Source: RMDB library OK1LIB, as collected in RNAgym. This 177-nucleotide RNA was probed chemically with DMS and 2A3. The reactions ran in a buffer of 150 mM KOAc, 10 mM MgCl2 and 150 mM bicine (pH 8.5), at 24 C.
[RMDB]
RNA sequence: GGGAACGACUCGAGUAGAGUCGAAAACGAUGUCGGCACCGCGGGUGGCCGAGGCACUGGCCAACGGUCUGGCCGCCGAUCCGCUGUUUUGUGAUCUGCUUGCCAAUCUGCAUCUGGAUCUCGAGCAUGAUCGUAUACGAUUCGUCGUAUACGAUCAAAAAGAAACAACAACAACAAC
Reactivity to DMS in 0.01 (KOAc 150mM, MgCl2 10mM, bicine 150mM(pH8.5), 24C), signal-to-noise 6, nucleotides 027 to 126: c100g010a070u050g000u010c010g000g030c050a180c050c040g000c040g010g000g030u010g010g010c000c000g000a080g010g020c110a090c150u050g010g010c020c020a050a120c070g010g000u010c050u010g010g040c040c090g020c030c040g000a040u000c030c040g000c060u010g000u000u000u010u000g010u010g000a030u010c020u000g000c050u010u020g000c060c110a090a090u030c060u010g010c050a070u010c070u010g010g000a050u010c050u020c040g000a080g010c110a180
Reactivity to 2A3 in 0.01 (KOAc 150mM, MgCl2 10mM, bicine 150mM(pH8.5), 24C), signal-to-noise 9, nucleotides 027 to 126: c040g060a060u140g060u140c020g010g010c030a010c050c020g030c030g060g030g110u040g030g000c010c010g000a040g030g020c080a050c250u160g100g010c010c020a080a050c050g010g020u040c040u110g040g020c020c030g000c000c000g020a050u030c020c020g020c060u050g080u090u070u120u110g100u060g020a050u010c010u030g020c030u040u080g010c020c020a060a130u060c040u070g030c000a040u040c050u070g040g010a050u020c020u020c040g020a040g030c050a080
Annotation: Values cover nucleotides 27 to 126.